Chemical mapping of a 207-nucleotide RNA with DMS and 2A3. The data come from the RNA Mapping Database (RMDB), library OK3TST. Values cover nucleotides 27 to 156. For 2A3, 945 sequencing reads were counted.
[RMDB]
RNA sequence: GGGAACGACUCGAGUAGAGUCGAAAAGUCUGCAUAGCACAUCUCAAAUUCCAGGCUCCAGAAGGAAAGCAGGUGUCCAACAUAAACCAUAUUGUUUGUACAAGUAGUUUAGGUGCAAUGAACCACUCUUAUUGGUCAAGGAGUGGUGAGAACCCUAUAGCAGGAUAGGGUUCGCCCUAUCCUGCUAAAAAGAAACAACAACAACAAC
Reactivity to DMS in 0.01 (KOAc 150mM, MgCl2 10mM, bicine 150mM(pH8.5), 24C), signal-to-noise 2, nucleotides 027 to 156: g000u000c040u000g000c010a070u000a060g010c040a030c030a080u030c010u000c060a090a060a260u000u000c010c020a100g050g040c000u000c050c030a210g020a170a160g030g000a040a050a130g050c070a050g020g030u000g000u000c050c020a060a080c050a120u000a020a070a000c040c040a090u000a090u010u000g010u000u000u020g000u020a090c060a050a110g020u000a050g000u000u000u000a030g000g060u000g020c040a040a120u020g010a120a060c000c000a030c000u000c000u000u010a230u010u010g030g010u010c050a140a130g000g030a040g020u000g030g010u030g010a120g020a100a080c030c010c020u000a120
Reactivity to 2A3 in 0.01 (KOAc 150mM, MgCl2 10mM, bicine 150mM(pH8.5), 24C), signal-to-noise 2, nucleotides 027 to 156: g020u010c050u110g040c040a080u080a060g090c070a010c010a090u010c020u010c080a100a110a150u110u060c040c010a040g060g010c000u060c070c040a160g010a180a040g080g010a080a030a000g030c070a000g010g040u060g040u000c020c020a040a040c020a100u110a090a010a000c020c050a060u060a060u130u140g050u090u100u120g020u020a020c020a030a010g060u080a010g000u080u020u030a010g030g020u050g050c060a070a100u120g110a070a040c000c010a010c000u000c010u060u070a070u090u150g060g010u060c030a030a000g020g010a000g000u010g000g030u000g000a000g000a000a000c040c000c000u130a070